[RMDB]
An RNA of 177 nucleotides, treated with 2A3 and DMS and read out base by base. The data come from the RNA Mapping Database (RMDB), library OK1LIB. The reactions ran in a buffer of 150 mM KOAc, 10 mM MgCl2 and 150 mM bicine (pH 8.5), at 24 C. As a SHAPE reagent, 2A3 marks flexible, mostly unpaired nucleotides at the ribose 2'-OH. For DMS, 15,379 sequencing reads were counted.
RNA sequence: GGGAACGACUCGAGUAGAGUCGAAAAUGGCUCGAAGGCGCGUCUCCGCACUGGCCCCCGGCCUCGAGGUCUCCGGAGGGGAGACAAGACCGGCGCCUUUGAUCUCGUCGGCCGGACGGAGCCCGGGCUACCGUCCAUUAUUCGUAAUGGACGGUAGAAAAGAAACAACAACAACAAC
Reactivity to 2A3 in 0.01 (KOAc 150mM, MgCl2 10mM, bicine 150mM(pH8.5), 24C), signal-to-noise 9, nucleotides 027 to 126: u110g030g010c010u010c040g030a050a020g050g000c020g010c010g070u030c020u020c020c000g050c020a120c090u070g050g000c000c000c000c000c000g010g010c010c010u040c040g020a030g020g020u010c020u030c030c030g100g090a120g090g190g020g010a030g020a030c040a030a020g080a060c020c050g060g010c020g050c010c000u050u030u100g040a030u010c020u000c020g060u030c070g010g010c000c000g010g000a030c040g020g010a030g010c010c010c010g010g010g010
Reactivity to DMS in 0.01 (KOAc 150mM, MgCl2 10mM, bicine 150mM(pH8.5), 24C), signal-to-noise 5, nucleotides 027 to 126: u020g010g020c020u000c020g010a090a030g000g010c040g010c070g000u000c010u010c010c020g020c070a060c080u030g000g000c040c010c030c010c010g000g000c020c000u010c020g010a050g010g010u000c020u010c030c020g020g030a140g020g000g010g010a020g000a050c050a090a130g000a100c050c050g000g000c160g000c030c010u000u000u010g000a080u020c020u000c020g000u010c180g010g010c010c030g000g010a090c090g000g000a070g020c040c010c030g000g010g010